[RMDB]
RNA sequence: GGGAACGACUCGAGUAGAGUCGAAAAAACGGCAUUUGUCGAUCACGUGGAUCACGGAUGACUAAAGGAGUGAAUAUGGAGAUUAGGGCAAGACCGUGAGGGUCUUAUUUUUAUACUUUAAAAUAAAUGGAGGCAAAAAUGACGGAUAAUGAAGUAGUACUUAUGCCUAAUUCGUUAGGCAUAAGUAAAAAGAAACAACAACAACAAC
Reactivity to 2A3 in 0.01 (KOAc 150mM, MgCl2 10mM, bicine 150mM(pH8.5), 24C), signal-to-noise 1, nucleotides 027 to 156: a000a000c100g010g020c020a030u050u000u150g030u030c040g020a020u040c070a090c270g050u090g060g040a080u070c010a020c020g090g000a040u050g050a040c040u090a030a070a170g050g000a000g000u010g030a000a050u150a080u110g010g010a030g000a030u020u190a070g050g050g010c070a010a000g000a010c010c010g070u080g070a040g010g000g030u010c030u050u020a020u010u110u000u020u030a090u040a040c000u000u050u100a070a080a020a060u100a030a020a060u180g000g030a000g010g000c000a000a000a000a080a080u080g010a030c020g000g000a000u030a090a100u140g040a020a010g000u140a020g010
Reactivity to DMS in 0.01 (KOAc 150mM, MgCl2 10mM, bicine 150mM(pH8.5), 24C), signal-to-noise 1, nucleotides 027 to 156: a060a020c120g000g000c020a140u030u000u000g050u000c030g030a090u010c050a120c200g040u010g000g010a070u010c000a070c020g120g010a080u000g040a030c050u010a020a020a160g000g000a060g020u010g020a050a090u000a100u000g030g000a100g150a120u000u000a060g030g020g030c030a040a080g010a050c030c010g000u000g010a090g050g010g010u000c020u020u010a040u000u030u000u000u000a120u020a260c010u000u000u000a060a000a050a130u010a050a040a080u020g000g010a070g020g020c020a020a030a050a060a030u000g020a060c000g000g000a090u000a020a080u010g020a090a050g000u000a060g010